[RMDB]
RNA sequence: GGGAACGACUCGAGUAGAGUCGAAAAAGGAGAAAAAAUCUGGCAUGCAUAUCCCUCUUAUUGCCGGUCGCGAUGACUUUCCUGUGUAAACGUUACCAAUUGUUUAAGAAGUAUAUACGCUACGAGGGAUCCUAAAAAUAUUCGUAUUUUUAGGAUCAAAAGAAACAACAACAACAAC
Reactivity to DMS in 0.01 (KOAc 150mM, MgCl2 10mM, bicine 150mM(pH8.5), 24C), signal-to-noise 7, nucleotides 027 to 126: a070g020g000a120g000a020a030a120a090a110a080u010c030u010g020g010c030a040u000g010c090a090u010a090u000c020c010c020u000c060u000u000a100u010u000g010c030c050g010g020u000c080g010c090g010a060u000g000a110c060u000u000u000c030c020u000g010u010g020u000a050a050a090c060g000u000u010a080c090c050a080a140u010u000g010u000u010u000a060a070g010a070a110g010u010a030u010a080u010a070c080g010c120u000a040c090g000a060g000g010
Reactivity to 2A3 in 0.01 (KOAc 150mM, MgCl2 10mM, bicine 150mM(pH8.5), 24C), signal-to-noise 3, nucleotides 027 to 126: a000g130g020a090g050a060a120a010a020a010a050u080c070u070g000g000c030a030u070g020c020a020u060a090u200c010c020c000u010c010u060u110a100u040u060g030c060c000g010g000u020c020g000c020g030a050u040g000a030c000u040u030u050c030c030u070g030u010g020u080a030a080a040c050g030u030u040a040c020c020a100a110u080u060g030u030u090u040a040a020g020a020a000g010u000a020u000a000u000a100c040g000c050u010a020c040g030a020g050g070

This 177-nucleotide RNA was probed chemically with DMS and 2A3. For DMS, 8,769 sequencing reads were counted. It was measured as part of the RMDB library OK2TST. The reactions ran in a buffer of 150 mM KOAc, 10 mM MgCl2 and 150 mM bicine (pH 8.5), at 24 C. DMS (dimethyl sulfate) methylates the pairing face of unpaired adenines and cytosines.